[RMDB]
RNA sequence: GGGAACGACUCGAGUAGAGUCGAAAAGAGGAAGAUCCGAACGGAGUGAGGAAGUGUGGGAUGUACCGACGUGUGAGGAUUAUCACAGUAUUCCUCAAUACAUCGAUGUAUCGAUCUUCCUUCAUUCGUCCUGGCGUGGAUUCGUCCACGCCAGGACAAAAGAAACAACAACAACAAC
Reactivity to 2A3 in 0.01 (KOAc 150mM, MgCl2 10mM, bicine 150mM(pH8.5), 24C), signal-to-noise 2, nucleotides 027 to 126: g080a000g080g000a000a000g020a100u040c040c020g030a260a030c000g000g000a000g000u000g040a000g060g000a000a080g000u070g050u110g140g150g000a080u090g040u140a080c000c000g130a210c070g180u200g200u020g070a050g070g000a000u000u080a030u090c000a080c000a070g000u010a100u000u000c030c010u010c000a020a000u220a000c090a170u050c000g050a050u150g100u070a080u120c000g020a000u040c000u050u000c000c000u050u030c000a040u040u100c050
An RNA of 177 nucleotides, treated with 2A3 and read out base by base.
Values cover nucleotides 27 to 126.
For 2A3 the reverse transcriptase was SuperScript II with manganese.